[RMDB]
RNA sequence: GGGAACGACUCGAGUAGAGUCGAAAAGAUAUCACACAAGGUCUUCCUCGUAUUCAAGAGAUUUUCGAAGCACGUAACCCUAAAGGUCAAGCGGUAAUUACGGAAAUCGAAGGUGUCGUAGAAGAUAACUAAGCUGAGUAUUCGUACUCAGCUUAGUAAAAGAAACAACAACAACAAC
Reactivity to DMS in 0.01 (KOAc 150mM, MgCl2 10mM, bicine 150mM(pH8.5), 24C), signal-to-noise 7, nucleotides 027 to 126: g010a090u030a080u020c060a110c120a070c180a150a080g010g010u010c010u000u000c010c010u000c070g010u030a050u020u020c030a060a140g010a240g000a020u010u010u010u010c010g010a070a110g000c150a080c050g010u010a060a050c020c010c010u080a070a130a280g000g000u020c080a080a110g010c020g010g000u030a090a130u020u020a110c020g020g000a020a020a020u000c010g010a180a050g010g000u010g000u000c000g030u000a120g000a040a020g000a020u020a060
Reactivity to 2A3 in 0.01 (KOAc 150mM, MgCl2 10mM, bicine 150mM(pH8.5), 24C), signal-to-noise 9, nucleotides 027 to 126: g050a020u190a050u150c040a020c010a010c030a100a060g110g010u000c000u010u000c000c010u000c010g050u060a080u050u160c060a100a020g020a000g000a070u000u010u000u020c010g030a050a010g060c110a040c130g020u040a020a050c010c010c060u160a120a090a040g070g010u050c090a110a050g050c030g020g030u090a090a090u110u060a080c000g000g010a020a010a000u020c000g010a040a020g020g030u040g040u030c020g000u020a020g010a040a010g020a030u070a100